[RMDB]
RNA sequence: GGGAACGACUCGAGUAGAGUCGAAAACGGCUACGCCAUCGGGUACGGCUGCAGCAAGUGGGCGGUGGAGGUGCUUCUCAAGGAGCUGCACCAGCGCUGGGGUGUUCCCGUCAAGGUCUUCCGCUGCGUUCCUGCGGAAAUUCGUUUCCGCAGGAACAAAAGAAACAACAACAACAAC
Reactivity to DMS in 0.01 (KOAc 150mM, MgCl2 10mM, bicine 150mM(pH8.5), 24C), signal-to-noise 2, nucleotides 027 to 126: c070g000g010c050u020a040c080g020c050c010a090u020c050g000g010g020u010a080c100g000g010c100u010g010c040a050g020c020a070a150g020u010g000g000g030c050g010g020u010g000g000a080g020g010u000g030c020u000u000c000u010c120a100a100g000g000a100g020c040u000g010c030a040c020c020a080g010c110g000c050u020g010g010g030g000u000g010u000u000c040c000c020g060u000c110a070a160g010g010u000c060u020u000c040c020g000c050u020g010c140
Reactivity to 2A3 in 0.01 (KOAc 150mM, MgCl2 10mM, bicine 150mM(pH8.5), 24C), signal-to-noise 1, nucleotides 027 to 126: c000g030g000c010u090a010c090g070c040c020a120u100c040g030g010g070u110a080c090g060g040c100u060g040c000a010g030c010a060a120g130u110g060g040g070c030g000g010u040g050g040a130g040g050u060g010c020u110u060c010u000c040a100a180g130g030a030g020c030u050g000c020a050c000c000a030g020c070g000c050u000g020g010g060g030u070g010u040u030c000c020c000g040u080c060a070a040g090g020u010c000u050u030c030c010g010c100u080g010c010
Chemical mapping of a 177-nucleotide RNA with DMS and 2A3. Reactivities are given for positions 27 through 126. The 2A3 profile rests on 1,379 reads.